Structure probing data (2A3 and DMS) for a 207-nucleotide construct. The 2A3 profile rests on 1,430 reads.

RNA sequence: GGGAACGACUCGAGUAGAGUCGAAAACGCGAAUGUUGAUUUUAAUUGUGUUAAUGUGUCGUUUGUGCUGUCAUCACGGCCAUAGAUCAAUGUAUACAUAGCAUUAUAAUAAUGUCGGCUUUCUUCAAACUUCACGAAGUGUAAUUUAGGCAAUAACUCCAGUCACAUAAUUCGUUAUGUGACUGGAAAAAGAAACAACAACAACAAC
Reactivity to 2A3 in 0.01 (KOAc 150mM, MgCl2 10mM, bicine 150mM(pH8.5), 24C), signal-to-noise 3, nucleotides 027 to 156: c050g030c030g070a100a060u070g010u010u060g030a160u060u050u070u170a050a050u090u040g010u010g030u030u030a110a080u090g050u010g010u020c030g010u020u020u080g060u060g010c040u040g050u060c040a100u080c030a060c040g040g000c010c010a050u100a060g100a040u080c060a020a050u050g060u070a040u020a050c010a010u060a010g040c010a000u000u080a050u110a210a060u070a090a040u050g030u030c050g030g010c000u040u090u000c010u070u000c030a090a110a060c020u060u060c060a010c130g060a030a030g010u050g010u110a030a080u040u080u090a060g020g040c050a050a060u000a070a010c010
Reactivity to DMS in 0.01 (KOAc 150mM, MgCl2 10mM, bicine 150mM(pH8.5), 24C), signal-to-noise 2, nucleotides 027 to 156: c040g000c050g010a090a100u000g010u000u000g010a110u000u010u000u000a040a150u000u000g020u000g020u000u000a090a070u000g000u000g030u000c030g030u000u010u000g030u010g020c030u000g010u000c050a130u000c130a070c040g000g030c010c050a100u000a070g000a070u000c070a070a060u000g000u010a060u000a070c060a080u000a090g020c000a040u000u000a070u000a080a130u010a070a080u000g010u000c050g010g030c030u020u010u010c020u000u000c050a050a050a050c040u000u000c040a080c080g000a050a090g010u020g010u010a070a070u010u000u010a040g020g010c070a080a090u000a050a080c080